[RMDB]
An RNA of 177 nucleotides, treated with 2A3 and DMS and read out base by base.
High 2A3 reactivity points to a flexible backbone, as in loops and unpaired stretches.
The 2A3 profile rests on 186,704 reads.
RNA sequence: GGGAACGACUCGAGUAGAGUCGAAAAGCUAGAGCGUUGUCGUAUUAGGCCGGAUAUGCGACGUCAGUUUGAUCCUGACCGGCCUAAGGGGCUGCGAAGCGGUCGAUCUUACUGGUGCUCUAGGAAAGGCGAAUGGUGUGUUCGCGCACUAUUUGCCAAAAGAAACAACAACAACAAC
Reactivity to 2A3 in 0.01 (KOAc 150mM, MgCl2 10mM, bicine 150mM(pH8.5), 24C), signal-to-noise 9, nucleotides 027 to 126: g070c010u010a000g000a000g010c030g070u090u130g050u080c030g010u040a060u050u060a070g060g040c030c020g030g020a070u080a020u190g040c050g020a020c010g050u070c010a020g000u020u090u100g030a050u030c030c050u040g010a020c000c010g020g000c000c000u010a040a030g020g010g010g000c020u050g020c050g070a090a020g110c030g020g010u010c010g020a060u010c010u030u050a020c010u030g040g020u090g010c000u000c000u010a010g010g040a090a080a030
Reactivity to DMS in 0.01 (KOAc 150mM, MgCl2 10mM, bicine 150mM(pH8.5), 24C), signal-to-noise 9, nucleotides 027 to 126: g010c000u000a010g000a020g010c010g010u030u020g010u000c030g020u000a060u010u010a060g000g010c010c020g000g000a150u030a060u010g010c040g000a020c030g020u030c030a030g020u000u010u010g000a050u010c060c160u020g010a100c070c000g000g010c010c010u010a030a030g010g010g000g010c010u000g010c050g010a110a100g020c040g010g010u010c030g000a050u010c030u000u000a030c030u010g000g010u020g000c000u000c000u000a000g000g010a040a090a100